[RMDB]
RNA sequence: GGGAACGACUCGAGUAGAGUCGAAAACAUAGCGUUUCACAAUGUGCGCCAUUAACAUUGUUCAUGCAAGCACGUUUCGCAAUGUACGGCGCAGAAACAUUGCCAACACAAAUACGCUUCACGAUGUAAAACAUCGGUGCGUUCGCGCACCGAUGAACUUGAUCUCGGCGUUCGCGCCGAGAUCAAGAAAAGAAACAACAACAACAAC
Reactivity to 2A3 in 0.01 (KOAc 150mM, MgCl2 10mM, bicine 150mM(pH8.5), 24C), signal-to-noise 1, nucleotides 027 to 156: c080a020u300a010g000c000g000u100u080u060c080a010c000a030a010u080g000u000g020c000g050c000c000a020u110u000a040a000c010a050u020u020g050u060u070c090a090u080g110c040a030a100g020c030a050c170g020u070u120u030c050g000c000a000a000u000g000u010a010c080g020g000c000g080c030a020g080a000a020a000c000a000u000u000g030c030c020a140a000c070a040c000a150a120a000u080a000c000g060c000u100u300c190a000c070g130a030u050g050u300a080a140a160a090c000a000u000c000g000g020u010g000c000g000u000u080c170g000c020g000c030a000c010c000g000a000u000g000a000a000
An RNA of 207 nucleotides, treated with 2A3 and read out base by base. It was measured as part of the RMDB library M2RFPK. The reactions ran in a buffer of 150 mM KOAc, 10 mM MgCl2 and 150 mM bicine (pH 8.5), at 24 C.